[RMDB]
RNA sequence: GGGAACGACUCGAGUAGAGUCGAAAAGGCAUGCAUCUGUAGUCCUAGCAACUCAGGAAGCUGAGAUGGGAGGAUUGCUUGAGCCCGGGGGUUGGAGGCUGCAGUGGGCUAUGAUCAUGCCACUGGAUGCCAGGCUGUCCCUAAAAACAAAAGAAAGCCAUACGCAUUUUUUCGAAAAUGCGUAUGGAAAAGAAACAACAACAACAAC
Reactivity to 2A3 in 0.01 (KOAc 150mM, MgCl2 10mM, bicine 150mM(pH8.5), 24C), signal-to-noise 2, nucleotides 027 to 156: g010g000c050a020u070g000c010a010u050c050u100g060u090a030g020u020c000c000u010a030g070c010a010a070c000u020c030a020g160g040a210a140g120c040u030g010a000g000a020u060g090g010g020a030g030g030a080u000u080g020c000u040u130g070a000g010c000c000c000g030g000g000g000g030u050u070g030g040a010g010g000c010u030g000c000a010g030u070g010g050g000c000u080a060u100g020a020u110c050a020u120g020c000c000a000c000u000g030g050a080u080g070c060c000a010g030g080c040u010g030u040c000c000c000u060a020a060a160a010a010c050a010a080a180a020g260a300a180a050g190

An RNA of 207 nucleotides, treated with 2A3 and read out base by base.
Reactivities are given for positions 27 through 156.